RNA sequence: GGGAACGACUCGAGUAGAGUCGAAAAAACUAUGCUGGAUAUAUGCCAAGCACGUGUCACAUACAAAAUUGUCUCACGCUAUUUUGAUUGCUAUGAGGGUGGCUGCAUUACUGCUAAAGAAGUGGUAGUUACCAAUCUUAAUAAGAGCGCUGGGUGGCAACGCAUUCGAUUUCGAUCGAAUGCGUUGAAAAGAAACAACAACAACAAC
Reactivity to DMS in 0.01 (KOAc 150mM, MgCl2 10mM, bicine 150mM(pH8.5), 24C), signal-to-noise 1, nucleotides 027 to 156: a050a050c070u000a040u000g020c000u000g020g000a100u000a140u000a030u020g020c020c000a160a080g000c070a040c010g010u010g000u000c020a050c020a050u010a220c070a110a040a170a150u000u000g030u000c000u000c030a010c010g020c060u000a100u000u000u000u000g010a110u000u000g020c080u000a100u010g000a090g020g040g000u000g010g020c040u000g030c030a080u000u000a000c010u000g000c000u000a040a090a080g000a160a050g000u000g010g030u000a080g020u000u000a090c070c010a000a070u000c030u000u000a030a110u000a050a080g010a100g040c050g000c070u000g000g000g040u010g000g000
Reactivity to 2A3 in 0.01 (KOAc 150mM, MgCl2 10mM, bicine 150mM(pH8.5), 24C), signal-to-noise 3, nucleotides 027 to 156: a000a000c190u160a100u120g000c020u030g020g010a010u020a020u030a010u300g070c020c010a070a070g030c020a000c090g060u050g070u110c020a010c010a050u170a080c080a050a120a100a070u110u070g040u010c020u020c070a020c000g000c020u020a070u060u080u030u080g070a040u000u110g020c030u070a060u150g020a070g070g000g000u010g020g020c010u010g020c010a000u060u110a030c030u000g060c030u230a160a130a070g070a190a000g020u040g070g020u010a000g030u060u030a020c000c000a010a020u000c020u030u040a060a050u090a160a010g060a020g040c010g000c070u010g000g000g020u010g040g000
Structure probing data (DMS and 2A3) for a 207-nucleotide construct. For DMS, 2,612 sequencing reads were counted. For DMS the reverse transcriptase was MarathonRT. Reactivities are given for positions 27 through 156. Conditions: 150 mM KOAc, 10 mM MgCl2 and 150 mM bicine (pH 8.5), 24 C. The 2A3 profile rests on 1,185 reads.